[RMDB]
RNA sequence: GGGAACGACUCGAGUAGAGUCGAAAAGGUGUGUCUGAUGCAACCCGCACAAGCGCCGAUGACCAAUGGCUCCCAUUAUACCUACUGGGCUUGUACAGAGUCGGCCGCACUCAGAUGACCGAUUACCAAUGCAGCCUACUUUCGAGUAGGCUGCAUUAAAAGAAACAACAACAACAAC
Reactivity to 2A3 in 0.01 (KOAc 150mM, MgCl2 10mM, bicine 150mM(pH8.5), 24C), signal-to-noise 1, nucleotides 027 to 126: g090g000u100g000u000g030u110c020u010g010a000u020g020c010a080a110c000c160c030g000c060a090c060a060a050g040c090g030c050c000g000a000u040g070a080c010c060a050a050u090g020g010c050u030c100c020c010a020u100u130a040u020a100c100c150u040a090c090u060g060g020g000c040u110u120g000u010a010c040a000g040a010g020u010c000g040g040c060c070g000c020a030c030u030c030a010g000a020u000g010a000c020c030g000a020u080u040a060c000c050
Reactivity to DMS in 0.01 (KOAc 150mM, MgCl2 10mM, bicine 150mM(pH8.5), 24C), signal-to-noise 2, nucleotides 027 to 126: g020g040u000g030u010g010u020c010u000g000a020u000g050c050a140a150c080c050c090g020c080a080c120a040a050g030c050g010c000c010g000a080u020g000a110c100c110a080a060u010g000g010c050u010c070c080c020a080u000u000a060u010a130c130c090u020a090c120u000g000g010g010c080u000u010g000u030a060c040a130g000a280g010u000c020g040g010c120c100g030c040a010c180u000c040a020g000a020u000g000a000c020c000g000a150u000u000a120c030c010
Chemical mapping of a 177-nucleotide RNA with 2A3 and DMS. The 2A3 profile rests on 906 reads. The DMS profile rests on 1,305 reads. The RNA was probed in 150 mM KOAc, 10 mM MgCl2 and 150 mM bicine (pH 8.5) at 24 C.